[RMDB]
RNA sequence: GGGAACGACUCGAGUAGAGUCGAAAAUGGCUCAUGCCUGUAAGCUCAGCACUUUGGGAGGCAGAGGUGAGCAGACUGCCUGAGCUCAGGAGUUCGAGACCAGCCUGGGCAACAUGGUGAGACCCUAUCUCUACUAAAAAUACAAAAAAUUAGCACAACGAUAGAUAGUUUUCGAACUAUCUAUCGUAAAAGAAACAACAACAACAAC
Reactivity to 2A3 in 0.01 (KOAc 150mM, MgCl2 10mM, bicine 150mM(pH8.5), 24C), signal-to-noise 4, nucleotides 027 to 156: u090g030g000c020u030c020a030u130g220c030c020u040g010u050a080a010g030c000u000c050a030g050c060a080c150u200u180u130g040g020g000a050g050g020c030a010g030a030g060g020u040g030a030g000c020a020g040a050c010u030g020c000c010u010g000a010g000c000u000c010a000g010g010a020g010u100u150c130g030a030g080a100c040c010a000g030c010c000u040g020g000g000c000a020a010c080a090u120g000g000u020g040a010g030a030c000c000c000u050a070u030c030u000c020u010a050c030u060a050a050a030a060a030u160a070c080a020a060a020a020a040a080u140u150a040g060c090a040c020a090
Reactivity to DMS in 0.01 (KOAc 150mM, MgCl2 10mM, bicine 150mM(pH8.5), 24C), signal-to-noise 1, nucleotides 027 to 156: u020g000g010c000u000c050a040u000g000c000c010u000g040u010a070a100g020c010u000c050a060g030c030a060c070u000u000u020g040g010g030a050g010g020c030a040g000a050g030g010u010g000a090g080c000a060g010a050c050u000g030c010c010u020g000a060g010c070u000c010a070g030g010a090g030u000u000c030g020a110g000a060c010c010a060g000c000c000u000g010g000g030c030a020a050c020a080u000g010g000u010g010a130g020a080c010c020c000u000a080u010c020u010c010u000a030c000u020a000a010a010a030a040u000a160c030a020a000a020a050a200a090u000u010a010g000c020a100c060a170